RNA sequence: GGGAACGACUCGAGUAGAGUCGAAAACGUGUUAAGUCUUCUCGUCUAUUAGCGACAGAUAAGGCGUUCAAAGGAUGCGAUUGUAGCUGAGGUAUUUAUGGACAGGAGCUCCUUGGCAGGUGGUACGCCAUGCUGGAACUUUCGAGUUCCAGCAUGGAAAAGAAACAACAACAACAAC
Reactivity to 2A3 in 0.01 (KOAc 150mM, MgCl2 10mM, bicine 150mM(pH8.5), 24C), signal-to-noise 3, nucleotides 027 to 126: c030g050u010g000u050u090a080a010g010u070c000u020u020c010u010c000g000u000c010u020a110u050u090a050g010c020g030a010c030a020g070a060u080a050a000g090g010c000g000u030u050c070a090a090a010g060g020a030u040g070c030g080a040u030u080g060u070a070g000c030u010g010a040g010g010u100a130u050u270u070a110u120g060g000a030c000a020g030g000a010g000c010u020c010c000u040u000g000g000c010a000g000g010u010g000g000u060a020c000g010
Reactivity to DMS in 0.01 (KOAc 150mM, MgCl2 10mM, bicine 150mM(pH8.5), 24C), signal-to-noise 3, nucleotides 027 to 126: c030g000u010g020u010u010a040a090g030u010c010u000u000c060u000c120g000u000c010u010a050u010u030a080g020c020g000a090c080a070g000a060u030a050a060g010g020c000g030u000u000c060a080a130a150g000g000a050u000g010c010g000a080u050u010g000u010a050g010c010u000g020a080g000g000u000a120u020u000u010a070u010g010g000a010c010a070g000g010a170g000c010u000c030c000u000u000g010g010c080a030g010g020u000g000g000u000a070c150g040
The record gives the reactivity of an RNA of 177 nucleotides to 2A3 and DMS. DMS adducts were read by reverse transcription with MarathonRT. The 2A3 profile rests on 2,822 reads. The reactions ran in a buffer of 150 mM KOAc, 10 mM MgCl2 and 150 mM bicine (pH 8.5), at 24 C. Source: RMDB library OK1LIB, as collected in RNAgym. For 2A3 the reverse transcriptase was SuperScript II with manganese. For DMS, 4,828 sequencing reads were counted.